[RMDB]
RNA sequence: GGGAACGACUCGAGUAGAGUCGAAAAGCUGGCUUUAGGAAAGAAUGUUCCAUGACCGUAAAUACAGGCACCCCACAGUGCUUGCUAUCGCGGCAAUAUCGCCAGUGGUGCUGUCGUGAUGCGGUCUAGAACAGGAUAUAUUCGUAUAUCCUGUUCUAAAAGAAACAACAACAACAAC
Reactivity to DMS in 0.01 (KOAc 150mM, MgCl2 10mM, bicine 150mM(pH8.5), 24C), signal-to-noise 9, nucleotides 027 to 126: g030c060u010g010g000c020u010u010u010a090g010g010a140a090a070g010a090a100u020g010u000u000c000c010a110u020g010a020c010c000g010u000a050a100a100u020a160c020a020g000g010c010a010c010c060c080c290a100c270a110g000u000g010c030u000u000g010c060u000a050u010c070g010c050g000g000c000a020a040u000a030u000c060g000c060c070a090g000u010g000g010u000g010c070u000g010u000c020g010u000g010a060u000g010c010g000g000u000c010u000
Reactivity to 2A3 in 0.01 (KOAc 150mM, MgCl2 10mM, bicine 150mM(pH8.5), 24C), signal-to-noise 9, nucleotides 027 to 126: g040c020u030g050g010c020u140u150u210a160g060g100a090a060a040g100a120a130u200g030u040u000c020c030a080u090g010a020c000c010g010u040a120a150a050u130a050c010a010g010g000c000a010c010c020c030c010a050c050a040g020u020g010c010u040u040g010c030u040a020u110c040g010c020g010g000c000a000a020u040a020u090c030g010c040c030a030g010u050g030g020u020g000c020u010g020u040c010g010u010g010a010u040g000c000g000g000u000c000u000
This 177-nucleotide RNA was probed chemically with DMS and 2A3.
For DMS the reverse transcriptase was MarathonRT.
Source: RMDB libraries RFM100 and RFMREP, as collected in RNAgym.
Reactivities are given for positions 27 through 126.